[RMDB]
Notes: Chemical mapping of a 177-nucleotide RNA with DMS and 2A3. For 2A3, 7,961 sequencing reads were counted. It was measured as part of the RMDB library TTRDES. Conditions: 150 mM KOAc, 10 mM MgCl2 and 150 mM bicine (pH 8.5), 24 C. Reactivities are given for positions 27 through 126.
RNA sequence: GGGAACGACUCGAGUAGAGUCGAAAAGAUAUGGAGGGAUACAUACCACAACAGCCGACUUCGGAAACGAAGUCGGACAUGUGGUGUAUUCCCUCCUAAGUCAAACAUGCAUGUUCGCAUGCAUGAAUCGUAGUAGAGUGUUCGCACUCUACUACGAAAAAGAAACAACAACAACAAC
Reactivity to DMS in 0.01 (KOAc 150mM, MgCl2 10mM, bicine 150mM(pH8.5), 24C), signal-to-noise 4, nucleotides 027 to 126: g020a020u000a300u000g010g010a000g020g020g010a030u000a050c040a090u010a250c020c000a000c000a010a110c300a260g000c020c000g010a010c000u000u000c000g010g000a100a100a180c000g010a000a000g000u000c000g010g030a000c050a060u000g000u000g000g010u000g000u000a020u000u000c000c000c000u000c010c000u000a020a070g010u010c060a160a160a300c010a010u000g000c000a010u000g000u010u020c270g030c010a000u010g020c010a000u000g010a090a150
Reactivity to 2A3 in 0.01 (KOAc 150mM, MgCl2 10mM, bicine 150mM(pH8.5), 24C), signal-to-noise 2, nucleotides 027 to 126: g020a030u080a030u220g000g000a010g000g000g000a000u020a010c030a050u240a060c000c010a020c020a120a120c060a080g030c010c010g000a000c010u010u010c020g030g020a080a060a060c000g010a010a000g020u000c000g000g000a000c010a010u050g000u000g030g000u000g010u000a010u020u050c010c000c000u000c000c000u000a000a010g020u000c000a080a030a050c000a000u000g000c000a010u010g070u060u150c300g030c170a000u000g000c000a000u000g010a040a150